[RMDB]
Notes: The record gives the reactivity of an RNA of 177 nucleotides to 2A3 and DMS.
RNA sequence: GGGAACGACUCGAGUAGAGUCGAAAAGAAACGAUGCUGGAAAAGAUUAUGGAAACCCUGAAACGCGGAAAGGGUGAAACGCGGAAACAUUAUCGAAAUGUCGGAAAAACGAUCAGCUUCGGAGAAAGGCAUAUGAAUUGUUCGCAAUUCAUAUGCCAAAAGAAACAACAACAACAAC
Reactivity to 2A3 in 0.01 (KOAc 150mM, MgCl2 10mM, bicine 150mM(pH8.5), 24C), signal-to-noise 1, nucleotides 027 to 126: g060a000a030a000c010g000a010u060g040c020u040g000g050a020a020a020a020g000a010u050u000a000u000g030g050a090a080a030c030c000c000u020g050a150a130a000c030g000c010g040g050a020a040a210g150g060g000u080g050a060a020a000c050g010c010g000g000a010a000a000c040a060u000u000a000u060c010g010a000a010a260u100g010u050c000g000g030a300a000a000a000a000c030g000a060u000c000a000g010c000u070u000c000g010g000a080g100a110a110a020
Reactivity to DMS in 0.01 (KOAc 150mM, MgCl2 10mM, bicine 150mM(pH8.5), 24C), signal-to-noise 3, nucleotides 027 to 126: g000a170a110a130c000g000a020u000g030c020u000g010g000a150a070a090a200g000a040u000u010a050u000g000g000a200a120a040c000c000c000u000g010a140a120a130c060g080c050g020g010a090a120a020g020g000g010u000g000a050a130a070c050g000c040g010g000a050a080a080c060a030u000u010a020u000c090g010a010a070a120u020g010u020c050g000g010a050a020a050a090a150c060g000a020u000c010a030g000c010u000u000c010g000g000a130g030a030a150a070

Reactivities are given for positions 27 through 126. Source: RMDB library OK1LIB, as collected in RNAgym. For DMS, 3,252 sequencing reads were counted. The reactions ran in a buffer of 150 mM KOAc, 10 mM MgCl2 and 150 mM bicine (pH 8.5), at 24 C. For 2A3 the reverse transcriptase was SuperScript II with manganese.